An RNA of 177 nucleotides, treated with 2A3 and DMS and read out base by base.
The DMS profile rests on 5,994 reads.
Reactivities are rounded to 0.1 and cut off at 0 and 3.
2A3 adducts were read by reverse transcription with SuperScript II with manganese.
Conditions: 150 mM KOAc, 10 mM MgCl2 and 150 mM bicine (pH 8.5), 24 C.
Reactivities are given for positions 27 through 126.
The 2A3 profile rests on 3,043 reads.
RNA sequence: GGGAACGACUCGAGUAGAGUCGAAAAGAUAUGGACCCAUAGGCUCGGGCGACGAAGAAGCUCGGAAACGAGCUUCAGAGUCCGAGCCUCAUGGGUCCUAAGUCAAACACCCGGUUCGCCGGGUGAAUCAAGUAAGGAAGUUCGCUUCCUUACUUGAAAAAGAAACAACAACAACAAC
Reactivity to 2A3 in 0.01 (KOAc 150mM, MgCl2 10mM, bicine 150mM(pH8.5), 24C), signal-to-noise 1, nucleotides 027 to 126: g030a020u080a040u130g000g000a000c000c010c000a000u000a000g000g000c000u000c040g000g000g000c020g100a300c050g030a100a070g020a000a030g000c020u030c040g020g000a060a080a010c000g000a000g000c000u020u000c010a020g000a000g010u000c000c000g000a000g010c040c000u010c000a000u000g020g020g000u000c000c000u000a000a000g000u010c010a000a080a020c010a020c040c020c000g000g060u090u090c250g040c060c030g050g020g000u010g000a000a070
Reactivity to DMS in 0.01 (KOAc 150mM, MgCl2 10mM, bicine 150mM(pH8.5), 24C), signal-to-noise 5, nucleotides 027 to 126: g000a050u010a300u000g000g000a010c000c000c010a010u000a030g010g010c000u000c000g010g010g010c000g000a160c240g000a100a080g000a020a010g010c000u010c000g010g000a060a100a220c010g010a020g010c000u000u000c010a010g000a150g000u000c000c010g000a000g000c000c000u000c020a000u010g000g010g010u000c000c000u000a000a060g000u010c030a120a130a230c010a000c000c000c000g010g000u000u010c200g010c010c010g010g000g020u000g000a020a110